This 207-nucleotide RNA was probed chemically with 2A3.
The RNA was probed in 150 mM KOAc, 10 mM MgCl2 and 150 mM bicine (pH 8.5) at 24 C.
The data come from the RNA Mapping Database (RMDB), library RNAMAK.
The 2A3 profile rests on 1,140 reads.

RNA sequence: GGGAACGACUCGAGUAGAGUCGAAAAGGGGUCUCAACGAGGAUCCUGAUGAGCAACAGCUUACUGAAGCCUCCACGGUAAGACAUGCUCAAAGGGAUCCGAUGAGUUGAGACGGAGGCACCCAAAACAAGAACUCUUGUUCGCAAGAGUUCUUGAAGUUUAAGCCCUACUUCGGUAGGGCUUAAACAAAAGAAACAACAACAACAAC
Reactivity to 2A3 in 0.01 (KOAc 150mM, MgCl2 10mM, bicine 150mM(pH8.5), 24C), signal-to-noise 1, nucleotides 027 to 156: g040g020g030g010u040c000u000c000a000a000c010g010a030g000g000a000u010c000c020u070g010a080u060g000a000g000c040a020a060c040a150g000c010u000u000a000c000u010g060a130a040g010c000c000u010c000c000a010c000g000g000u000a000a000g040a040c100a200u300g000c000u000c000a000a000a010g000g000g000a000u030c000c000g000a020u000g000a000g000u000u000g000a000g000a010c000g000g000a000g010g000c000a070c020c000c000a020a030a000a070c000a010a000g030a000a000c000u000c010u000u010g020u120u160c160g000c070a000a000g000a000g000u000u030c000u000u000g010a000a000